[RMDB]
RNA sequence: GGGAACGACUCGAGUAGAGUCGAAAAGGCAGGGCAACAUCAUCGAAUUGCUGGGAAGCCCUAAAGCUCUUGGUACCAACCUGCAGCGGAAACGCUCGGGGGGCCCCGCUCAGGGGGAGGUGAUAAUCCAAGCAGAUGCAACAAUGGGUGAUCAGCAGUUACUAUGUUCGUUCGCGAACAUAGUAACAAAAGAAACAACAACAACAAC
Reactivity to 2A3 in 0.01 (KOAc 150mM, MgCl2 10mM, bicine 150mM(pH8.5), 24C), signal-to-noise 2, nucleotides 027 to 156: g030g010c020a010g060g030g010c040a070a040c010a120u160c000a000u030c010g080a090a110u160u090g000c000u010g000g030g020a030a030g000c000c000c010u030a030a020a020g010c000u000c000u010u000g000g000u000a010c010c000a020a060c000c050u100g060c060a000g000c000g000g020a080a120a020c030g010c030u100c150g020g000g000g010g040g000c020c000c010c000g050c060u170c110a070g000g020g030g000g030a100g000g010u000g020a050u100a150a010u030c010c010a000a010g000c020a010g020a020u060g050c170a300a020c000a010a030u030g000g000g020u140g030a100u040c000a010g000c000a000
Reactivity to DMS in 0.01 (KOAc 150mM, MgCl2 10mM, bicine 150mM(pH8.5), 24C), signal-to-noise 1, nucleotides 027 to 156: g070g010c010a080g010g010g030c040a140a060c100a050u000c050a130u010c060g040a120a030u000u000g010c000u000g000g000g040a190a300g010c000c000c010u000a040a060a150g000c020u010c010u000u010g010g030u000a030c010c000a170a240c000c010u000g010c180a040g010c010g010g000a180a110a160c030g050c070u020c080g010g030g000g020g060g020c100c060c010c010g050c130u000c050a110g030g070g150g010g010a060g040g010u010g030a110u010a080a100u000c010c030a030a110g000c040a130g000a090u000g010c040a060a060c060a120a080u000g030g000g030u000g020a080u000c030a090g020c030a230